[RMDB]
RNA sequence: GGGAACGACUCGAGUAGAGUCGAAAAUUCGCAUGGGGCCUGCUCUAAGGUGGGCCAGCUAAAAGCGACAUUGCAAAUGUGGAAUGUGAGAGUGGUAGGGUUAAAACCUGACUCUGUAAAUUUAUCACUGUAACAUAUCUUUCGAGAUAUGUUACAGAAAAGAAACAACAACAACAAC
Reactivity to 2A3 in 0.01 (KOAc 150mM, MgCl2 10mM, bicine 150mM(pH8.5), 24C), signal-to-noise 8, nucleotides 027 to 126: u050u010c030g000c030a040u070g040g000g070g000c000c000u020g030c010u050c060u210a140a080g090g000u020g000g000g000c000c000a000g000c000u060a070a080a040a030g000c010g030a040c030a060u090u150g050c040a030a070a120u180g050u100g070g040a060a030u070g040u090g070a040g000a010g020u060g050g150u140a050g060g010g000u050u140a050a090a030a030c000c000u020g010a020c000u000c020u010g090u180a070a110a150u090u100u060a140u120c050a010
Reactivity to DMS in 0.01 (KOAc 150mM, MgCl2 10mM, bicine 150mM(pH8.5), 24C), signal-to-noise 9, nucleotides 027 to 126: u010u020c020g010c020a090u010g010g000g010g010c010c000u000g010c000u010c220u050a120a110g010g030u000g000g000g010c000c000a020g020c050u010a070a060a130a170g010c020g000a070c180a040u010u000g010c070a060a070a090u010g010u010g000g000a040a030u010g000u010g010a030g000a030g000u010g020g010u010a070g000g000g000u000u030a090a070a070a120c020c000u000g000a050c030u000c010u000g010u010a040a080a090u010u020u020a060u030c120a150